[RMDB]
This 207-nucleotide RNA was probed chemically with 2A3.
High 2A3 reactivity points to a flexible backbone, as in loops and unpaired stretches.
2A3 adducts were read by reverse transcription with SuperScript II with manganese.
It was measured as part of the RMDB library M2RFOK.
Reactivities are given for positions 27 through 156.
RNA sequence: GGGAACGACUCGAGUAGAGUCGAAAAAGCACGGUUUUUGAGGACGCAUUUUGUCCGUGCGGUAAUGCCCUCCUUUACACUUUCUCGCAUGGUGCGGGGGUGUGGAGAGGAAACAAAAGCUAGUCUCGAUAGGCGGUUAACUUCGGUUAACCGCCAACUACCUCCAAACGUUCGCGUUUGGAGGUAGAAAAGAAACAACAACAACAAC
Reactivity to 2A3 in 0.01 (KOAc 150mM, MgCl2 10mM, bicine 150mM(pH8.5), 24C), signal-to-noise 2, nucleotides 027 to 156: a000g000c000a000c000g020g000u000u000u000u010u030g100a100g000g030a010c020g030c100a140u010u000u000u010g000u000c010c000g000u010g000c000g030g090u190a070a030u280g030c000c000c000u010c000c000u050u070u070a000c030a010c000u030u160u150c020u020c010g040c010a080u300g230g000u260g170c000g010g010g000g000g000u000g000u010g010g010a030g020a010g010g060a050a020a010c010a000a000a010a000g050c030u100a050g030u000c000u000c050g030a100u100a170g000g020c000g000g000u010u000a000a000c000u030u030c140g010g000u000u000a000a000c020c000g000c000c000a000a000